[RMDB]
RNA sequence: GGGAACGACUCGAGUAGAGUCGAAAAGUUGUCUGUGGUGGAAAACGUACGUUUUAUAUCACAGCAAAUGGCGGUAUUUCAUUCUGUCGUAGGCAUAAUUGGAAUUGUGUGGAUUGUGACACUGCAGCGGUUUAAGAAACUUCGGUUUCUUAAACCGAAAAGAAACAACAACAACAAC
Reactivity to DMS in 0.01 (KOAc 150mM, MgCl2 10mM, bicine 150mM(pH8.5), 24C), signal-to-noise 1, nucleotides 027 to 126: g000u010u000g000u010c010u000g010u000g010g000u000g020g010a050a020a020a000c010g000u010a070c170g010u000u000u000u010a080u000a020u000c010a000c020a000g010c040a030a010a050u000g020g030c090g020g020u000a040u000u000u000c110a050u000u010c040u000g050u010c060g030u000a040g020g010c050a030u010a030a120u000u010g020g000a090a090u010u000g010u000g000u010g000g000a100u010u010g000u010g000a080c050a050c020u000g020c090a070g040